Chemical mapping of a 177-nucleotide RNA with 2A3.
The RNA was probed in 150 mM KOAc, 10 mM MgCl2 and 150 mM bicine (pH 8.5) at 24 C.
RNA sequence: GGGAACGACUCGAGUAGAGUCGAAAAUUGCGGAGCAUGGUGGCCGGUCCGCAAUGAUAAUCUCAUCACAACAGCAGGUCGAUCUUCAGUGUAGACCUGAACAUGAAAAUACUAAAACUCUGAACUGGAUCGGUUUGCUGUUCGCAGCAAACCGAUCAAAAGAAACAACAACAACAAC
Reactivity to 2A3 in 0.01 (KOAc 150mM, MgCl2 10mM, bicine 150mM(pH8.5), 24C), signal-to-noise 1, nucleotides 027 to 126: u000u040g070c000g020g000a050g000c080a110u190g000g010u080g130g170c050c050g110g070u010c000c000g000c000a000a000u040g000a040u200a140a000u050c000u000c060a220u040c110a070c000a000a200c010a000g150c000a000g000g000u050c000g010a080u000c070u060u020c020a050g060u080g060u060a000g010a050c000c000u000g000a000a000c020a000u250g010a050a210a090a100u260a010c090u090a000a000a160a000c070u160c000u000g020a060a060c040u000g000

Reactivities are given for positions 27 through 126.